[RMDB]
RNA sequence: GGGAACGACUCGAGUAGAGUCGAAAAGAAGGCUCCUUCGGGAGCCUUCAAACUGGUGUCCCGACCACGCUGGAUGUCAAUCCCUGAAGUCAUAGAUCGGGAAAAGUUGCAACUUCGGUUGCAACAAUCCAGACUUAUAGUUCGCUAUAAGUCUGGAAAAAGAAACAACAACAACAAC
Reactivity to DMS in 0.01 (KOAc 150mM, MgCl2 10mM, bicine 150mM(pH8.5), 24C), signal-to-noise 3, nucleotides 027 to 126: g010a020a010g000g020c000u000c010c010u000u020c170g020g000g000a030g010c000c000u010u000c010a010a080a160c100u000g010g010u000g010u010c000c000c000g000a060c020c010a040c040g020c080u010g000g000a080u010g000u020c150a100a150u000c010c010c010u000g010a030a040g000u010c030a080u000a130g000a100u000c030g000g000g010a020a030a020a080g000u000u000g000c010a010a010c000u000u010c130g030g010u000u000g010c010a000a000c010a020a100
Reactivity to 2A3 in 0.01 (KOAc 150mM, MgCl2 10mM, bicine 150mM(pH8.5), 24C), signal-to-noise 1, nucleotides 027 to 126: g010a000a000g030g020c000u010c020c010u030u110c300g070g020g000a020g010c000c010u000u010c000a000a000a000c010u020g030g000u010g020u010c000c000c000g030a010c000c010a000c000g170c030u100g120g170a230u250g070u300c110a100a090u040c020c000c000u040g050a010a000g000u000c000a000u010a040g050a080u040c030g010g030g000a000a030a010a020g000u010u000g010c010a000a000c000u030u100c290g120g030u000u000g000c010a000a000c000a000a010
Description: The record gives the reactivity of an RNA of 177 nucleotides to DMS and 2A3. Source: RMDB library M2PK50, as collected in RNAgym. For 2A3, 1,422 sequencing reads were counted. Reactivities are given for positions 27 through 126. The RNA was probed in 150 mM KOAc, 10 mM MgCl2 and 150 mM bicine (pH 8.5) at 24 C. For DMS, 3,576 sequencing reads were counted.